[RMDB]
RNA sequence: GGGAACGACUCGAGUAGAGUCGAAAAAUCGGUAGCGGCUCGGCGAAGGCCGCACAAGCGCAGUGUUCCUGCCAGCGCUCGAGCAAUUGCAGGAGCUGGGUGAGAAGCAGUUCGUCGCGCUCGUCGAAGUCCUCCCAUGAUUCGUCAUGGGAGGACUAAAAGAAACAACAACAACAAC
Reactivity to DMS in 0.01 (KOAc 150mM, MgCl2 10mM, bicine 150mM(pH8.5), 24C), signal-to-noise 1, nucleotides 027 to 126: a110u000c040g010g050u000a200g020c040g000g010c040u000c080g010g000c000g000a020a060g000g040c010c030g060c090a050c040a150a300g000c000g010c040a050g000u000g020u010u000c010c000u010g000c050c150a160g010c300g000c040u000c140g000a140g020c030a080a300u010u000g000c030a070g010g020a090g010c000u000g000g000g060u020g010a180g030a070a170g000c030a010g000u000u000c010g040u010c010g000c080g010c010u000c050g000u010c040g030a050
Reactivity to 2A3 in 0.01 (KOAc 150mM, MgCl2 10mM, bicine 150mM(pH8.5), 24C), signal-to-noise 1, nucleotides 027 to 126: a000u100c030g010g040u080a050g000c030g040g000c010u030c010g020g000c010g010a050a030g080g040c010c050g000c000a000c000a010a000g030c100g000c050a010g000u020g200u160u030c000c000u030g010c010c010a040g020c020g000c110u100c080g180a230g020c040a090a190u130u110g000c000a000g000g020a020g000c020u000g140g170g000u040g010a060g000a040a030g000c010a000g070u000u050c000g010u010c030g040c020g070c020u090c060g130u030c030g070a020